[RMDB]
An RNA of 177 nucleotides, treated with DMS and 2A3 and read out base by base. It was measured as part of the RMDB libraries RFM100 and RFMREP. DMS adducts were read by reverse transcription with MarathonRT. High DMS reactivity at an A or C suggests that its Watson-Crick edge is free. The reactions ran in a buffer of 150 mM KOAc, 10 mM MgCl2 and 150 mM bicine (pH 8.5), at 24 C.

RNA sequence: GGGAACGACUCGAGUAGAGUCGAAAAUGCCCGGUGAUGUACAGUCCCUUUCCACAACGUUGGAGAUGAAGCUGGGCUUUCGAGUCUGCGCCUGCAUAUUCCUACGACUUCUCAGAGUCCCGUGGACAAUAACCUACUGCUUCGGCAGUAGGUUAUUAAAAGAAACAACAACAACAAC
Reactivity to DMS in 0.01 (KOAc 150mM, MgCl2 10mM, bicine 150mM(pH8.5), 24C), signal-to-noise 4, nucleotides 027 to 126: u020g000c010c010c000g000g030u010g000a080u010g000u030a070c120a110g000u010c020c040c050u010u000u010c000c020a030c100a130a100c220g030u050u000g010g000a060g020a060u010g000a090a190g000c020u000g020g010g000c010u000u010u010c070g000a060g010u000c010u000g020c090g010c020c030u000g000c040a050u020a140u000u000c030c030u000a130c060g010a070c040u000u000c040u000c070a100g000a120g000u000c000c030c040g030u010g010g000a110c170
Reactivity to 2A3 in 0.01 (KOAc 150mM, MgCl2 10mM, bicine 150mM(pH8.5), 24C), signal-to-noise 4, nucleotides 027 to 126: u150g040c000c000c000g010g000u130g000a140u190g060u160a030c020a030g110u040c010c000c010u040u030u000c020c010a080c030a300a150c140g070u100u020g030g000a040g010a060u100g030a020a000g010c020u020g020g010g010c010u010u020u020c040g010a020g020u030c030u040g020c020g020c050c000u030g010c030a020u060a110u100u060c000c010u030a050c010g050a050c020u040u030c040u050c030a110g010a030g060u040c000c020c010g060u090g020g000a020c030